The record gives the reactivity of an RNA of 207 nucleotides to 2A3.
RNA sequence: GGGAACGACUCGAGUAGAGUCGAAAAGAGUCAUACAACCCCAGAAACCAUUCCUUAUACCUUGAGUAUUGCUGAAUUCAGUUUAGCGUGCAUGCUCUUGGCUAUUCUCAUAGUGAUAGUCAAAUUUAAAACGACGAUGACUUCGGUCAUCGUCGAAUCAGACCUGAUAGUUCGCUAUCAGGUCUGAAAAAGAAACAACAACAACAAC
Reactivity to 2A3 in 0.01 (KOAc 150mM, MgCl2 10mM, bicine 150mM(pH8.5), 24C), signal-to-noise 1, nucleotides 027 to 156: g040a010g120u100c000a010u100a150c030a030a180c030c000c000c010a030g010a020a070a000c030c020a060u090u230c010c020u150u050a080u050a250c010c020u080u160g010a020g020u030a050u100u140g020c040u070g050a190a140u150u180c040a020g130u030u090u120a000g000c070g000u050g100c010a030u080g000c000u040c000u000u030g000g000c000u000a000u010u010c080u000c080a080u100a130g090u070g060a010u030a020g000u000c000a030a060a110u190u280u210a150a250a010a040c000g000a000c000g000a000u000g000a000c000u000u040c270g110g000u040c050a000u000c000g000u000c020g000a000a010
Source: RMDB library M2RFPK, as collected in RNAgym.
The reactions ran in a buffer of 150 mM KOAc, 10 mM MgCl2 and 150 mM bicine (pH 8.5), at 24 C.